[RMDB]
RNA sequence: GGGAACGACUCGAGUAGAGUCGAAAAGAUAUGGACGAUGAGAUCCGAACUACCUACGAAUUCGGAAACGAAUUCGUUAGGCGGAUCGAGUCCUAAGUCAAAAGCCGGACUCUUCGGAGUCCGGCAAGUAGAGUUUACAGUUCGCUGUAAACUCUACAAAAGAAACAACAACAACAAC
Reactivity to DMS in 0.01 (KOAc 150mM, MgCl2 10mM, bicine 150mM(pH8.5), 24C), signal-to-noise 3, nucleotides 027 to 126: g010a060u000a260u000g000g000a010c010g000a160u010g000a170g000a010u000c000c000g020a080a050c110u010a300c020c000u000a020c000g010a010a010u010u000c000g000g010a080a060a110c000g000a010a010u000u000c000g000u000u000a000g020g010c020g010g000a010u000c000g000a100g000u000c000c000u000a030a110g010u000c030a090a130a170a160g000c000c000g010g000a030c010u000c010u000u020c180g010g000a030g010u000c000c000g020g020c000a000a000
Reactivity to 2A3 in 0.01 (KOAc 150mM, MgCl2 10mM, bicine 150mM(pH8.5), 24C), signal-to-noise 2, nucleotides 027 to 126: g000a010u070a010u120g000g000a000c010g090a090u300g180a090g000a100u050c030c030g020a080a090c090u200a180c150c010u000a010c000g020a010a010u000u000c000g030g000a020a030a020c000g020a000a000u010u000c010g000u060u170a010g000g070c040g030g000a000u000c010g000a000g000u020c010c010u000a050a000g000u010c030a210a010a190a000g000c020c020g000g000a000c010u020c010u070u130c300g130g000a000g010u000c010c010g000g000c010a000a000

Source information: The record gives the reactivity of an RNA of 177 nucleotides to DMS and 2A3. For DMS, 3,328 sequencing reads were counted. DMS adducts were read by reverse transcription with MarathonRT. For 2A3 the reverse transcriptase was SuperScript II with manganese. DMS (dimethyl sulfate) methylates the pairing face of unpaired adenines and cytosines. As a SHAPE reagent, 2A3 marks flexible, mostly unpaired nucleotides at the ribose 2'-OH.